This 177-nucleotide RNA was probed chemically with DMS. Source: RMDB library TTRINS, as collected in RNAgym.
RNA sequence: GGGAACGACUCGAGUAGAGUCGAAAAGAUAUGGACCUUUCUUACCAUUCGAAUAGUGGGAGAAGUAUGUCGGAAACGACAUAGCUUCUUUGAUCACUCAUUCGAAUGGUAAGAAAGGUCCUAAGUCCAGACUACUCUUGUUCGCAAGAGUAGUCUGAAAAGAAACAACAACAACAAC
Reactivity to DMS in 0.01 (KOAc 150mM, MgCl2 10mM, bicine 150mM(pH8.5), 24C), signal-to-noise 1, nucleotides 027 to 126: g010a100u010a300u020g000g000a020c000c010u000u010u000c000u000u000a020c000c000a020u000u000c010g020a030a000u010a030g000u000g000g040g000a030g020a020a010g000u000a000u010g010u000c000g010g020a140a130a240c000g000a010c000a020u000a020g000c010u000u000c010u010u010u010g020a080u000c020a010c000u000c250a010u000u010c030g000a010a010u000g020g000u000a010a010g010a000a000a000g000g000u000c020c000u000a000a020g000u010c040